This 177-nucleotide RNA was probed chemically with 2A3 and DMS.
The RNA was probed in 150 mM KOAc, 10 mM MgCl2 and 150 mM bicine (pH 8.5) at 24 C.
Reactivities are given for positions 27 through 126.
For DMS, 10,021 sequencing reads were counted.
It was measured as part of the RMDB library TTRDEL.
Values are in units of 0.01, from 0 to 300, in steps of 10.
RNA sequence: GGGAACGACUCGAGUAGAGUCGAAAAGAUAUGGAAGAUCGAAGCUCAACAGCAUAGUCUCGGAAACGAGAGCUAUGACAUGAGUUUUUGAUCUUCCUAAGUCAAAACGCUUUCUUCGGAAAGCGAACAACUUAACUGAGUUCGCUCAGUUAAGUUGAAAAGAAACAACAACAACAAC
Reactivity to 2A3 in 0.01 (KOAc 150mM, MgCl2 10mM, bicine 150mM(pH8.5), 24C), signal-to-noise 5, nucleotides 027 to 126: g020a000u070a030u170g000g000a000a010g000a010u000c010g020a010a010g000c010u000c000a040a180c050a180g140c000a010u010a010g010u020c000u000c000g020g030a080a060a030c010g000a010g000a020g100c010u010a000u010g060a040c020a070u060g000a010g010u190u110u000u040u160g000a000u000c000u000u000c000c000u000a000a000g000u000c010a000a010a090a110c020g000c000u010u010u020c010u030u020c100g130g010a010a000a000g000c010g010a020a020
Reactivity to DMS in 0.01 (KOAc 150mM, MgCl2 10mM, bicine 150mM(pH8.5), 24C), signal-to-noise 7, nucleotides 027 to 126: g010a050u010a300u000g000g000a010a000g000a010u000c000g010a010a000g000c000u010c000a030a080c200a220g000c010a010u000a000g010u000c000u000c010g010g000a110a110a170c010g000a020g010a060g000c000u000a000u000g000a020c070a250u000g000a010g010u000u010u010u010u000g000a010u000c000u000u000c000c000u000a010a080g000u000c030a080a060a090a190c030g010c000u000u000u000c000u000u010c200g020g000a010a010a000g010c000g000a060a110